About this RNA
The record gives the reactivity of an RNA of 177 nucleotides to 2A3 and DMS. For DMS the reverse transcriptase was MarathonRT. The DMS profile rests on 5,368 reads. The reactions ran in a buffer of 150 mM KOAc, 10 mM MgCl2 and 150 mM bicine (pH 8.5), at 24 C. Source: RMDB library TTRDEL, as collected in RNAgym. High DMS reactivity at an A or C suggests that its Watson-Crick edge is free. Reactivities are given for positions 27 through 126. For 2A3, 9,260 sequencing reads were counted.

RNA sequence: GGGAACGACUCGAGUAGAGUCGAAAAGAUAUGGACGAAGAACGAAGUGGAGUGCAGAAUCGGAAACGAUUUGGGCACGAUGAAACUUCGGGAGUCCUAAGUCAAAACUGACCGUUCGCGGUCAGAACAGAAUCUGUAAGUUCGCUUACAGAUUCUGAAAAGAAACAACAACAACAAC
Reactivity to 2A3 in 0.01 (KOAc 150mM, MgCl2 10mM, bicine 150mM(pH8.5), 24C), signal-to-noise 3, nucleotides 027 to 126: g020a020u040a020u090g000g000a000c020g080a160a240g040a170a020c020g000a010a000g030u000g010g050a040g000u010g000c010a010g010a010a000u000c010g010g000a010a020a020c000g000a010u000u010u050g230g290g000c000a000c020g020a010u020g000a000a020a000c000u000u000c000g000g010g010a050g010u000c000c000u010a060a010g040u010c020a010a000a160a250c010u000g000a000c010c010g030u070u090c300g010c020g080g000u000c000a000g000a020a010
Reactivity to DMS in 0.01 (KOAc 150mM, MgCl2 10mM, bicine 150mM(pH8.5), 24C), signal-to-noise 5, nucleotides 027 to 126: g020a020u010a200u010g000g020a020c000g030a160a110g020a140a170c040g000a010a010g000u010g000g000a060g030u000g010c000a300g000a020a000u000c000g010g000a040a050a110c010g020a010u000u000u000g000g020g010c000a010c000g000a060u020g000a080a100a010c010u000u000c000g010g010g010a100g020u000c000c010u000a020a090g000u000c020a100a050a090a170c000u000g000a010c000c000g010u000u010c200g030c000g010g000u000c000a000g000a070a200